[RMDB]
RNA sequence: GGGAACGACUCGAGUAGAGUCGAAAAGAUAUGGAGUCCCUGUAUCAAGAGCAUGUCGGAAACGACAUGGCUCUUUCAACGCAGGACUCCUAAGUCAAACAGCGCUAAACCUUCGGGUUUAGCGCUGCUUUCCAUAGAUGUUCGCAUCUAUGGAAAGAAAAGAAACAACAACAACAAC
Reactivity to 2A3 in 0.01 (KOAc 150mM, MgCl2 10mM, bicine 150mM(pH8.5), 24C), signal-to-noise 3, nucleotides 027 to 126: g010a010u060a040u100g020g000a010g010u100c130c070c000u010g010u020a190u210c240a130a000g000a000g010c010a010u010g000u000c010g000g030a060a030a050c010g000a000c000a000u010g020g000c000u000c000u000u040u040c010a010a010c060g000c000a010g000g020a000c000u000c000c000u010a050a020g020u010c010a100a070a120c010a020g000c000g020c010u000a000a020a000c010c000u050u160c300g060g000g000u010u000u000a000g010c000g000c000u000g010
Reactivity to DMS in 0.01 (KOAc 150mM, MgCl2 10mM, bicine 150mM(pH8.5), 24C), signal-to-noise 7, nucleotides 027 to 126: g010a030u010a300u010g000g000a020g010u000c110c070c300u000g010u000a060u000c190a030a010g000a010g000c000a010u000g010u010c000g010g000a090a060a120c010g010a010c000a010u000g020g020c010u000c000u000u000u000c200a160a080c140g000c010a010g000g010a040c000u000c000c000u010a010a060g000u000c010a190a130a300c010a010g010c000g010c000u000a000a010a010c000c000u000u020c260g020g010g010u000u000u000a000g010c000g000c000u000g000